The record gives the reactivity of an RNA of 207 nucleotides to 2A3 and DMS. The reactions ran in a buffer of 150 mM KOAc, 10 mM MgCl2 and 150 mM bicine (pH 8.5), at 24 C. Source: RMDB library RNAMAK, as collected in RNAgym. The DMS profile rests on 4,087 reads. The 2A3 profile rests on 2,511 reads.

[RMDB]
RNA sequence: GGGAACGACUCGAGUAGAGUCGAAAAGCUCGUUCGCGAGCAUGGGGGCGUACUACUGAGGCAUCGAUCGUGAGCGUAAGACAGAGACUCCCAAAUAGGAGUCUCAAUGACGCGUCCACGGGAGCCUCAGUAUCGCGAUUGCAGCAUUCGUGCUGAAGUGAUACAGAUCUUUCGAGAUCUGUAUCACAAAAGAAACAACAACAACAAC
Reactivity to 2A3 in 0.01 (KOAc 150mM, MgCl2 10mM, bicine 150mM(pH8.5), 24C), signal-to-noise 4, nucleotides 027 to 156: g000c010u000c010g050u110u120c260g000c010g220a030g020c030a060u140g020g000g000g000g030c010g010u050a050c040u030a000c000u020g000a010g020g000c040a290u130c090g160a100u050c010g000u000g010a130g000c010g020u040a140a070g040a100c110a060g040a010g000a000c000u040c010c010c050a100a250a000u270a060g000g000a000g010u000c000u000c010a030a030u070g000a020c030g020c010g080u100c060c000a000c010g020g000g010a030g000c000c000u000c000a000g000u000a000u040c000g000c000g040a040u050u300g020c020a000g020c010a010u070u120c200g110u080g000c000u010g020a190a040
Reactivity to DMS in 0.01 (KOAc 150mM, MgCl2 10mM, bicine 150mM(pH8.5), 24C), signal-to-noise 2, nucleotides 027 to 156: g010c010u010c000g040u000u010c120g060c050g010a020g060c000a040u000g000g020g100g100g050c040g040u000a110c130u050a020c020u000g000a050g030g030c000a300u010c150g020a090u000c000g000u010g010a000g000c000g050u010a070a210g010a230c040a150g010a030g010a030c000u010c010c000c010a070a150a180u000a040g010g030a030g030u000c000u000c020a050a060u000g010a070c100g020c030g010u000c000c000a040c010g000g000g000a070g010c000c000u000c010a000g000u000a000u000c000g010c000g000a150u000u010g020c000a070g010c020a160u000u010c140g020u000g030c030u000g000a060a200